[RMDB]
RNA sequence: GGGAACGACUCGAGUAGAGUCGAAAAGCAUGUAUGCUUCGGCAUACAUGCAAAAAGAUAUGGAUUCAUUCGGUGGGAGCAAGUCGGAAACGAUAGUUGCAUCGAUCACCGAGAUGAAUCCUAAGUCAAAAAACCCACCCACUUCGGUGGGUGGGAACAUAAAGGAAAUGUUCGCAUUUCCUUUAUGAAAAGAAACAACAACAACAAC
Reactivity to 2A3 in 0.01 (KOAc 150mM, MgCl2 10mM, bicine 150mM(pH8.5), 24C), signal-to-noise 2, nucleotides 027 to 156: g010c010a000u020g040u020a000u010g000c030u040u090c200g110g000c000a000u000a010c000a000u010g010c010a010a000a000a010a040g040a030u050a040u100g000g010a000u000u000c000a000u010u020c000g000g000u020g000g050g000a050g000c010a010a000g010u000c010g010g030a060a060a020c000g020a020u020a200g300u040u030g010c070a180u290c090g040a060u150c020a010c000c000g010a020g020a010u000g000a000a000u000c000c000u010a040a010g020u030c050a020a020a040a110a150a190c000c000c000a000c000c000c000a030c020u090u140c300g100g010u010g000g000g000u010g000g000g000a000a000